This 207-nucleotide RNA was probed chemically with DMS and 2A3.
It was measured as part of the RMDB library M2RFPK.
For DMS the reverse transcriptase was MarathonRT.
Values cover nucleotides 27 to 156.
[RMDB]
RNA sequence: GGGAACGACUCGAGUAGAGUCGAAAAUAACACUGGCGGCUGCGUAUCACUCUAGGGUACGUGAUAGUGCGAUAUAAGAAGCACUGGUACAUGCCGGCAGGGACAGUUAAGAGAUGGCCGUAGUCUCAAAAGGGGUCAUUCUUCGGAAUGACCCCAACUACCGUUCUAAGUUCGCUUAGAACGGUAGAAAAGAAACAACAACAACAAC
Reactivity to DMS in 0.01 (KOAc 150mM, MgCl2 10mM, bicine 150mM(pH8.5), 24C), signal-to-noise 2, nucleotides 027 to 156: u000a090a160c020a070c010u010g040g030c000g020g000c000u010g030c050g010u000a010u000c020a080c150u000c160u000a190g010g010g000u000a020c040g010u000g000a140u000a030g010u010g000c020g010a170u010a120u010a170a220g010a140a300g000c020a010c010u000g040g020u000a080c100a080u010g030c000c000g000g000c010a050g050g000g010a060c120a090g020u000u000a050a120g020a060g000a030u000g010g040c020c070g010u000a250g010u000c020u000c010a050a050a130a150g020g040g050g010u000c000a000u000u010c000u000u000c300g030g010a030a010u000g010a010c010c000c000c000a000a030
Reactivity to 2A3 in 0.01 (KOAc 150mM, MgCl2 10mM, bicine 150mM(pH8.5), 24C), signal-to-noise 4, nucleotides 027 to 156: u070a040a020c040a000c050u040g190g000c010g000g010c010u030g010c010g000u000a010u020c030a090c270u140c200u170a140g010g110g030u010a010c000g020u040g020a070u070a070g010u020g000c010g010a030u040a030u080a300a090g110a130a010g010c000a000c010u010g000g030u080a060c030a050u150g010c000c000g020g010c000a010g000g010g020a010c040a080g010u040u080a090a010g020a000g010a000u050g030g040c080c010g030u050a030g040u020c010u000c030a040a060a010a020g000g000g000g000u000c000a000u000u000c010u030u070c270g040g010a000a000u000g000a000c000c000c000c000a000a000